An RNA of 177 nucleotides, treated with 2A3 and DMS and read out base by base. The reactions ran in a buffer of 150 mM KOAc, 10 mM MgCl2 and 150 mM bicine (pH 8.5), at 24 C. The data come from the RNA Mapping Database (RMDB), library OK2TST.
RNA sequence: GGGAACGACUCGAGUAGAGUCGAAAAUUUUCUGCUGCAUGGAGGAGGAGAGCUCUGCACAUAUAAUAUGUGACUGCAUGGCGCUUUCCAUCAGGAGGAACACGCUCCUGGGCACGUAUGUAGUCCAUGAGCCUUUUAAUUUCGAUUAAAAGGCUCAAAAAGAAACAACAACAACAAC
Reactivity to 2A3 in 0.01 (KOAc 150mM, MgCl2 10mM, bicine 150mM(pH8.5), 24C), signal-to-noise 3, nucleotides 027 to 126: u070u010u000u020c020u030g070c000u040g000c030a040u060g040g020a040g010g000a010g050g020a040g010a010g040c000u030c020u070g030c060a000c030a020u200a000u060a150a170u130a100u260g070u070g040a050c020u010g000c000a030u050g070g000c010g010c070u060u100u000c010c020a050u070c000a030g010g010a010g020g060a140a090c130a020c160g130c010u000c000c020u000g000g040g000c060a000c070g010u040a040u090g010u010a000g000u030c010c010a040
Reactivity to DMS in 0.01 (KOAc 150mM, MgCl2 10mM, bicine 150mM(pH8.5), 24C), signal-to-noise 4, nucleotides 027 to 126: u000u010u000u030c040u000g030c040u010g010c080a050u000g010g010a090g010g010a130g010g010a090g000a060g010c010u000c080u000g000c030a040c070a030u000a080u010a090a120u000a290u010g010u000g000a060c060u000g010c010a010u000g010g040c040g020c060u000u000u000c040c020a100u000c000a020g020g020a040g000g010a120a080c230a090c170g000c010u000c000c000u000g000g010g000c250a050c060g020u010a020u000g010u000a030g010u000c010c040a110